[RMDB]
RNA sequence: GGGAACGACUCGAGUAGAGUCGAAAAUUCAGUCCUCUUGUUGGUGUGCAACCAAUAUAGCAGUGUGCCAGGCAGGAUGCAACCAAUAUUAAUCACGCGUAUGAAAAAGUUGAUCGCUAUCUGCUGACUAAGGGUCUAAGUUCGCUUAGACCCUUAGAAAAGAAACAACAACAACAAC
Reactivity to 2A3 in 0.01 (KOAc 150mM, MgCl2 10mM, bicine 150mM(pH8.5), 24C), signal-to-noise 1, nucleotides 027 to 126: u060u010c030a000g070u050c010c010u050c050u020u090g000u000u030g000g000u060g060u090g100c010a060a010c000c000a000a000u230a010u050a020g040c070a030g050u090g050u070g180c070c020a050g020g040c000a000g070g000a000u110g020c050a040a000c020c010a000a000u150a090u120u160a010a080u010c010a000c110g190c040g050u180a100u160g060a090a050a030a030a150g040u030u070g050a060u120c050g000c040u030a030u020c010u070g010c000u000g000a030
Reactivity to DMS in 0.01 (KOAc 150mM, MgCl2 10mM, bicine 150mM(pH8.5), 24C), signal-to-noise 5, nucleotides 027 to 126: u000u010c160a150g010u000c030c010u000c100u000u000g030u010u000g000g010u000g020u010g010c200a110a050c040c000a030a060u000a060u010a040g020c070a060g030u000g020u010g020c050c080a100g000g020c040a040g000g010a070u000g010c050a050a060c040c030a030a020u010a070u010u000a060a180u010c030a050c100g020c100g000u010a100u010g010a020a040a060a100a140g010u000u000g010a040u000c090g010c030u000a110u000c020u000g010c010u010g010a220
Structure probing data (2A3 and DMS) for a 177-nucleotide construct. DMS adducts were read by reverse transcription with MarathonRT. For 2A3, 921 sequencing reads were counted. For DMS, 4,315 sequencing reads were counted. Values cover nucleotides 27 to 126.